[RMDB]
RNA sequence: GGGAACGACUCGAGUAGAGUCGAAAACUCUUGCUCUUCGGAGCAAGAGAAAUAAACUUGACGCGCGUCAAGAAAAAGCGCAAAAUAAGAAAGAACAAACAUAAAUCCGACGCUUCGGCGUCGGAAACACUAAAUUGAGGUUCGCCUCAAUUUAGUGAAAAGAAACAACAACAACAAC
Reactivity to 2A3 in 0.01 (KOAc 150mM, MgCl2 10mM, bicine 150mM(pH8.5), 24C), signal-to-noise 4, nucleotides 027 to 126: c010u000c000u000u010g000c000u010c000u040u070c240g100g000a000g010c000a010a000g000a000g000a000a010a000u030a000a030a010c010u010u020g040a050c050g050c020g010c040g100u080c060a040a030g170a070a200a030a020a010g000c040g020c030a040a070a030a140u220a060a040g100a100a080a010g070a050a030c050a100a070a020c040a080u210a120a150a040u010c010c000g010a000c000g000c010u030u080c190g130g000c000g000u000c000g000g000a010a010a000
Reactivity to DMS in 0.01 (KOAc 150mM, MgCl2 10mM, bicine 150mM(pH8.5), 24C), signal-to-noise 3, nucleotides 027 to 126: c000u000c010u000u000g000c010u000c000u000u000c220g040g000a010g020c010a010a000g000a010g010a020a040a070u020a040a120a150c030u000u000g000a080c070g010c120g030c080g030u000c080a030a040g010a050a090a100a090a050g000c040g000c040a110a040a070a090u010a060a070g000a080a060a070g000a070a030c100a050a060a060c150a110u010a050a110a100u000c000c000g010a020c000g010c000u000u000c220g040g030c000g010u000c000g030g000a000a020a110
The record gives the reactivity of an RNA of 177 nucleotides to 2A3 and DMS.
The reactions ran in a buffer of 150 mM KOAc, 10 mM MgCl2 and 150 mM bicine (pH 8.5), at 24 C.